[RMDB]
RNA sequence: GGGAACGACUCGAGUAGAGUCGAAAAAGAAUUGUACCACCACUGCGGAUCCUAAACGGGCUCUGCAGUGGUUAUUCUUGUAAAGUACUAGGAGUGAAUAGUGGCCCGUAUUGCAGGCAUUAACAUUAAAAGGCAAUCCACUUCGGUGGAUUGCCAAGCAUAAAGGUAUGUUCGCAUACCUUUAUGCAAAAGAAACAACAACAACAAC
Reactivity to DMS in 0.01 (KOAc 150mM, MgCl2 10mM, bicine 150mM(pH8.5), 24C), signal-to-noise 2, nucleotides 027 to 156: a050g020a050a040u010u000g000u000a080c040c110a140c000c000a030c030u000g020c000g020g020a040u000c020c010u000a050a160a160c300g000g000g030c060u000c000u010g010c000a010g080u000g000g010u000u000a000u000u000c020u000u020g020u000a120a100a080g020u010a070c010u000a070g010g010a120g020u010g020a090a080u010a080g000u020g000g010c010c000c010g010u010a070u000u010g000c050a090g000g020c020a110u000u000a060a100c080a090u010u010a010a060a100a150g020g040c000a020a010u000c000c000a030c000u000u000c300g030g000u000g010g010a030u010u010g020c010c010a000a050
Reactivity to 2A3 in 0.01 (KOAc 150mM, MgCl2 10mM, bicine 150mM(pH8.5), 24C), signal-to-noise 2, nucleotides 027 to 156: a030g030a030a080u090u120g020u080a050c070c000a010c000c030a000c060u010g000c020g000g000a010u000c020c000u080a210a130a200c130g060g000g000c030u000c000u010g000c020a000g000u000g000g010u000u000a000u000u010c010u040u030g050u050a100a090a120g030u000a020c020u050a020g030g040a060g060u050g030a080a090u080a090g020u050g080g020c030c020c020g020u050a100u070u220g040c050a030g010g000c020a010u050u100a080a020c010a060u080u190a080a070a000a020g010g000c000a000a000u000c000c000a000c000u000u040c220g020g010u010g000g000a010u000u000g000c000c000a010a000